RNA sequence: GGGAACGACUCGAGUAGAGUCGAAAAGUUUGAUCCUGGCUCAGAGUGAACGCUGGCGGCGUGCCUAAUACAUGCAAGUCGAACGAUGAAGCUUCUAGCUUGCUAGAAGUGAAUUAGUGGCGCACGGUUCCCCGUACUACUUCGGUAGUACGGGGAAAAAAGAAACAACAACAACAAC
Reactivity to 2A3 in 0.01 (KOAc 150mM, MgCl2 10mM, bicine 150mM(pH8.5), 24C), signal-to-noise 1, nucleotides 027 to 126: g080u040u050u100g010a040u040c030c000u060g000g000c000u020c010a000g020a050g050u000g070a110a000c030g000c000u000g110g000c000g000g000c000g000u020g030c000c040u070a130a050u170a120c000a000u140g000c030a110a020g040u020c000g040a010a020c040g000a050u080g140a060a000g020c000u000u000c000u000a000g000c020u030u170g010c010u010a000g000a010a000g030u070g100a010a000u020u000a030g000u030g080g050c050g010c040a020c100g050g010
Reactivity to DMS in 0.01 (KOAc 150mM, MgCl2 10mM, bicine 150mM(pH8.5), 24C), signal-to-noise 2, nucleotides 027 to 126: g000u000u010u040g010a080u000c020c000u000g000g020c000u050c040a070g010a090g000u000g000a070a040c190g020c000u010g030g000c000g000g000c050g000u000g030c010c060u000a090a060u000a190c130a040u020g020c080a080a150g020u000c040g020a050a040c100g020a030u020g000a300a280g000c020u000u000c000u000a020g000c000u010u010g000c030u000a010g000a070a020g020u000g000a040a010u010u030a000g020u030g020g000c010g000c030a060c040g000g010

This 177-nucleotide RNA was probed chemically with 2A3 and DMS. For 2A3, 562 sequencing reads were counted. The RNA was probed in 150 mM KOAc, 10 mM MgCl2 and 150 mM bicine (pH 8.5) at 24 C. Source: RMDB library RFM100, as collected in RNAgym. DMS adducts were read by reverse transcription with MarathonRT. 2A3 adducts were read by reverse transcription with SuperScript II with manganese. Values cover nucleotides 27 to 126.